An RNA of 207 nucleotides, treated with DMS and 2A3 and read out base by base.

RNA sequence: GGGAACGACUCGAGUAGAGUCGAAAAGAUUUAAACAGAUGGAGAUAUACAAAUGUUUGAAUCCCAGUAACAAAAAUCCUGGUAUCUCGGGUAUACAGUAGUGCAGAUACUGUAUUUUUAAUGCUCCUUAGGUUUUCCAUCUUCGGAUGGAAAACAAACAUUCUUAUUCCUUCGGGAAUAAGAAUGUAAAAGAAACAACAACAACAAC
Reactivity to DMS in 0.01 (KOAc 150mM, MgCl2 10mM, bicine 150mM(pH8.5), 24C), signal-to-noise 1, nucleotides 027 to 156: g000a070u030u000u000a050a010a000c020a050g000a300u020g010g000a070g010a230u020a120u010a150c030a040a070a300u000g000u010u000u000g000a020a060u000c000c020c020a200g020u000a040a130c010a040a090a120a070a150u000c070c030u000g040g020u010a080u000c040u020c030g000g040g000u000a040u010a020c030a000g010u000a000g000u010g060c150a240g050a170u000a010c000u010g010u000a010u000u000u000u000u000a060a250u000g000c010u000c040c000u000u000a190g020g010u000u000u000u000c000c000a000u000c020u000u010c290g040g000a020u000g020g020a000a000a000a000c000a060a130
Reactivity to 2A3 in 0.01 (KOAc 150mM, MgCl2 10mM, bicine 150mM(pH8.5), 24C), signal-to-noise 3, nucleotides 027 to 156: g000a000u010u010u040a000a000a000c000a000g040a050u060g000g070a160g070a100u120a010u060a150c060a070a090a040u040g000u030u020u000g020a010a000u000c020c000c020a070g050u130a090a090c070a160a120a040a020a030u040c000c000u010g010g010u080a130u060c080u050c020g060g020g020u060a010u010a010c010a000g010u020a000g070u060g290c070a020g040a170u000a000c000u000g000u020a010u000u080u000u020u110a110a090u090g000c010u070c010c010u050u070a050g020g120u000u000u000u000c000c000a010u000c000u040u040c200g080g010a000u000g000g000a000a000a000a000c000a000a000

The RNA was probed in 150 mM KOAc, 10 mM MgCl2 and 150 mM bicine (pH 8.5) at 24 C. DMS adducts were read by reverse transcription with MarathonRT.